[RMDB]
RNA sequence: GGGAACGACUCGAGUAGAGUCGAAAAGCUCGUCCGGUUUGGCCCGAGCGAACACUUGACGUCCGGUUUGGCCCGUCUUGUGGAUUAGGACGUUCUACGUCCGGUUUGGCCCGUAGUUCGUCCGAAAGGCAAGGUUGUCGUUCGCGACGACCUUGCCAAAAGAAACAACAACAACAAC
Reactivity to 2A3 in 0.01 (KOAc 150mM, MgCl2 10mM, bicine 150mM(pH8.5), 24C), signal-to-noise 1, nucleotides 027 to 126: g000c070u020c020g030u000c000c000g120g130u100u040u300g130g020c000c000c040g010a040g000c000g000a130a000c000a000c000u000u000g010a000c000g150u100c010c060g300g060u030u080u050g090g000c000c090c010g000u000c000u000u000g000u000g000g050a070u100u000a000g010g000a000c000g000u000u000c000u000a000c000g050u040c000c010g000g130u070u050u300g030g000c000c000c000g000u000a010g010u000u000c000g000u000c000c000g000a130a020a000
Reactivity to DMS in 0.01 (KOAc 150mM, MgCl2 10mM, bicine 150mM(pH8.5), 24C), signal-to-noise 1, nucleotides 027 to 126: g000c010u000c060g000u000c000c050g060g020u000u010u050g000g010c170c040c000g000a060g010c130g000a090a100c000a000c010u000u040g000a030c020g040u000c010c040g040g000u010u020u110g010g020c160c190c010g000u000c020u020u000g000u000g000g000a140u000u030a110g000g000a000c020g010u000u000c000u000a020c000g020u040c000c000g000g000u030u020u020g000g030c230c160c020g000u000a040g000u010u000c000g010u000c000c000g000a000a050a060